Conditions: 150 mM KOAc, 10 mM MgCl2 and 150 mM bicine (pH 8.5), 24 C.
The record gives the reactivity of an RNA of 177 nucleotides to DMS.
For DMS, 7,495 sequencing reads were counted.
The data come from the RNA Mapping Database (RMDB), library TTRINS.

[RMDB]
RNA sequence: GGGAACGACUCGAGUAGAGUCGAAAAGAUAUGGACCAAUUUCUCAUGUGUGUAGCUUUUGACGCGUUGUAUUCGGAAACGAAUAUUAACGCGAUAAGCUAGACACAUGAGAAAUUGGUCCUAAGUCCGUAAUUACCAUGUUCGCAUGGUAAUUACGAAAAGAAACAACAACAACAAC
Reactivity to DMS in 0.01 (KOAc 150mM, MgCl2 10mM, bicine 150mM(pH8.5), 24C), signal-to-noise 3, nucleotides 027 to 126: g020a110u010a300u010g000g010a010c000c000a020a000u000u000u000c000u000c000a010u000g010u000g020u000g000u000a010g020c000u000u000u000u000g020a230c070g020c000g020u000u000g000u000a000u000u000c010g000g000a140a100a270c000g000a010a000u000a000u000u000a000a010c010g010c000g030a040u000a010a010g010c000u000a000g000a010c000a010c000a000u010g000a000g000a000a010a000u000u000g000g010u000c000c000u000a000a050g010u000c050